Chemical mapping of a 177-nucleotide RNA with DMS. The DMS profile rests on 1,670 reads. The reactions ran in a buffer of 150 mM KOAc, 10 mM MgCl2 and 150 mM bicine (pH 8.5), at 24 C.
RNA sequence: GGGAACGACUCGAGUAGAGUCGAAAACUGAACGCAGCCGAGGUUAGAUGAACGAAGAGGGCCUGUAGGUCGCACUCAUCGCGCGGCUAGCCUGUGAGGCCAGCCCUCGGGCCGCCACCCAACACGGCUGGGGGUGUAUGUUCGCAUACACCCCCAGAAAAGAAACAACAACAACAAC
Reactivity to DMS in 0.01 (KOAc 150mM, MgCl2 10mM, bicine 150mM(pH8.5), 24C), signal-to-noise 1, nucleotides 027 to 126: c080u000g010a090a040c100g000c010a140g000c000c000g010a090g000g010u050u000a070g000a010u040g000a180a160c000g040a120a220g020a020g050g000g000c020c120u000g000u050a140g000g000u000c010g030c010a180c110u000c140a060u000c110g000c130g040c040g040g000c010u000a080g000c030c000u020g040u000g000a080g000g000c040c070a080g000c000c000c000u020c000g000g000g030c130c060g000c050c000a110c060c000c090a040a000c180a040c040g000g010